[RMDB]
RNA sequence: GGGAACGACUCGAGUAGAGUCGAAAACCGUGCACUCUGGAACAAGCUUGAGAAACUGGGUCUAGUACCAGAUAUGACGGCAUGCCGCAUAAUGUAUCAUGGAAAGAUUUAUCGGUGCACGAUGGGCAAUAUUUUUGAAAUUCGUUUCAAAAAUAUUAAAAGAAACAACAACAACAAC
Reactivity to DMS in 0.01 (KOAc 150mM, MgCl2 10mM, bicine 150mM(pH8.5), 24C), signal-to-noise 9, nucleotides 027 to 126: c030c000g010u010g010c010a010c020u000c070u010g020g010a060a050c040a080a090g010c020u000u010g010a100g010a100a130a170c030u010g000g000g010u030c060u020a100g000u020a150c000c000a020g000a250u010a010u000g000a120c060g000g010c040a080u020g020c010c010g020c060a060u000a060a090u030g010u010a040u000c020a060u010g000g010a100a080a070g010a100u010u010u020a070u020c110g000g010u000g000c010a010c050g010a090u020g000g000g000c110
Reactivity to 2A3 in 0.01 (KOAc 150mM, MgCl2 10mM, bicine 150mM(pH8.5), 24C), signal-to-noise 7, nucleotides 027 to 126: c000c000g000u000g000c010a010c010u080c030u080g040g030a060a010c010a040a030g030c000u030u020g020a020g010a070a040a010c010u020g010g010g050u020c020u060a030g020u060a040c000c000a000g010a010u040a010u030g080a050c000g000g000c030a050u070g030c000c000g000c010a010u010a020a030u110g020u030a020u010c020a020u010g010g040a090a020a010g030a030u020u020u040a080u060c020g000g000u000g000c000a000c010g010a040u040g020g010g000c000
Structure probing data (DMS and 2A3) for a 177-nucleotide construct. 2A3 adducts were read by reverse transcription with SuperScript II with manganese. DMS adducts were read by reverse transcription with MarathonRT. For 2A3, 32,917 sequencing reads were counted. For DMS, 48,711 sequencing reads were counted. Conditions: 150 mM KOAc, 10 mM MgCl2 and 150 mM bicine (pH 8.5), 24 C.